RNA sequence: GGGAACGACUCGAGUAGAGUCGAAAAACGUUGAUAUGGAUUUACUCCGAGGAGACGAACUACCACGAACAGGGGAAACUCUACCCGUGGCGUCUCCGUUUGACGCGUAAGUCCUAAGUCAACAUGCGGCGUGUAAGCUUCGGCUUACACAAAAGAAACAACAACAACAAC
Reactivity to DMS in 0.01 (KOAc 150mM, MgCl2 10mM, bicine 150mM(pH8.5), 24C), signal-to-noise 9, nucleotides 027 to 129: a090c130g000u010u010g010a030u000a070u110g000g000a030u000u020u000a010c030u010c030c020g030a040g020g000a010g030a030c000g010a030a020c070u050a300c040c010a030c040g000a060a180c170a120g050g020g000g000a020a010a020c000u020c020u010a110c300c190c010g030u020g020g020c000g000u000c000u000c010c000g000u020u050u020g000a180c300g000c000g000u000a030a020g000u040c000c000u000a020a060g010u030c010a000a000c030a080u050g040c130g030g020c170
Reactivity to 2A3 in 0.01 (KOAc 150mM, MgCl2 10mM, bicine 150mM(pH8.5), 24C), signal-to-noise 8, nucleotides 027 to 129: a010c080g000u000u000g000a000u000a000u030g000g000a000u000u000u000a010c010u010c010c000g020a060g000g000a000g040a000c000g010a020a020c090u250a070c120c000a000c000g020a050a020c040a090g010g000g000g000a000a000a000c000u000c000u020a030c010c010c010g000u000g000g000c000g010u000c000u000c010c000g000u060u030u060g010a000c000g000c010g000u000a010a010g000u000c000c000u000a010a000g000u000c000a010a000c010a010u110g070c100g170g010c030

Source: RMDB library 15KLIB, as collected in RNAgym.
The record gives the reactivity of an RNA of 170 nucleotides to DMS and 2A3.
For DMS, 40,564 sequencing reads were counted.
Values cover nucleotides 27 to 129.